This 207-nucleotide RNA was probed chemically with 2A3 and DMS. For DMS the reverse transcriptase was MarathonRT. The reactions ran in a buffer of 150 mM KOAc, 10 mM MgCl2 and 150 mM bicine (pH 8.5), at 24 C. The data come from the RNA Mapping Database (RMDB), library OK3TST.

[RMDB]
RNA sequence: GGGAACGACUCGAGUAGAGUCGAAAAAAGCAUCAUUUGAGUACUUAAGGACAAUCACUGCAAAUUGAGACCGUUAUGGACUAAAACACCCCAUGUGACCAAUUUUGUAGAGCCAACCAAGCAAUGAAAGAUCCACAUGAGAUACGCAGUGCGCAGAAUAAAUAGUGCUAUUCGUAGCACUAUUUAUAAAAGAAACAACAACAACAAC
Reactivity to 2A3 in 0.01 (KOAc 150mM, MgCl2 10mM, bicine 150mM(pH8.5), 24C), signal-to-noise 8, nucleotides 027 to 156: a010a010g060c060a050u110c060a070u060u100u160g050a040g020u050a060c030u100u100a100a080g050g010a030c030a080a070u070c030a060c050u040g010c020a020a030a150u070u080g040a090g040a090c020c010g030u060u080a080u140g010g010a020c050u180a070a110a120a030c080a100c020c050c010c010a020u050g020u040g030a040c020c020a060a060u040u090u090u090g050u030a040g000a000g090c030c020a010a030c030c010a060a020g040c020a020a040u100g030a120a020a030g040a040u030c020c010a030c010a080u100g030a040g030a110u060a070c040g000c030a010g020u040g030c040g000c020a020g060a140
Reactivity to DMS in 0.01 (KOAc 150mM, MgCl2 10mM, bicine 150mM(pH8.5), 24C), signal-to-noise 6, nucleotides 027 to 156: a070a060g010c020a050u000c040a140u000u000u010g020a140g030u000a050c060u000u000a100a120g010g020a080c060a090a150u000c030a110c040u010g030c040a060a050a100u000u000g010a140g020a100c040c020g020u000u000a090u000g030g010a300c030u000a060a080a080a100c050a090c050c020c010c010a070u000g010u010g010a070c040c020a060a140u000u000u000u000g040u000a070g010a120g030c000c050a050a120c050c030a070a150g020c030a060a060u000g010a070a080a100g000a090u000c040c010a040c040a050u000g000a080g010a090u000a060c070g020c010a070g010u000g030c070g010c050a100g000a110